Description: Chemical mapping of a 177-nucleotide RNA with 2A3 and DMS. For DMS the reverse transcriptase was MarathonRT. For 2A3, 7,184 sequencing reads were counted.
RNA sequence: GGGAACGACUCGAGUAGAGUCGAAAAGAUAUGGAUUCAGGACAUGUAGUCGAUCGGAAACGAUCGAUACUACAACAGCCUGGUCCUAAGUCAAAGCUUGAAUCGGGCUUCGGCCCGAUUCAAGCAACGAUGAUAUCUACUUCGGUAGAUAUCAUCGAAAAGAAACAACAACAACAAC
Reactivity to 2A3 in 0.01 (KOAc 150mM, MgCl2 10mM, bicine 150mM(pH8.5), 24C), signal-to-noise 3, nucleotides 027 to 126: g020a030u080a040u160g040g010a030u300u300c020a010g030g000a040c100a160u130g000u010a000g020u000c000g000a010u010c010g020g040a070a060a050c010g010a000u000c000g000a000u010a020c000u010a020c010a120a040c020a040g060c000c010u010g000g000u000c000c000u010a140a010g020u030c050a110a070a060g010c010u010u000g020a010a000u000c010g010g000g010c000u140u150c300g160g010c000c000c060g000a000u020u010c000a010a010g000c000a000a000
Reactivity to DMS in 0.01 (KOAc 150mM, MgCl2 10mM, bicine 150mM(pH8.5), 24C), signal-to-noise 3, nucleotides 027 to 126: g000a040u000a300u000g000g000a000u000u010c010a000g000g000a030c100a170u000g010u000a010g010u000c010g000a010u010c000g020g000a120a080a180c010g010a010u000c000g010a060u010a010c010u000a000c000a040a120c220a180g000c010c000u010g000g000u000c000c000u010a020a120g010u000c010a110a110a160g000c000u000u000g000a000a000u010c000g000g000g000c000u000u010c240g050g010c000c000c000g000a000u000u000c000a000a010g000c020a020a020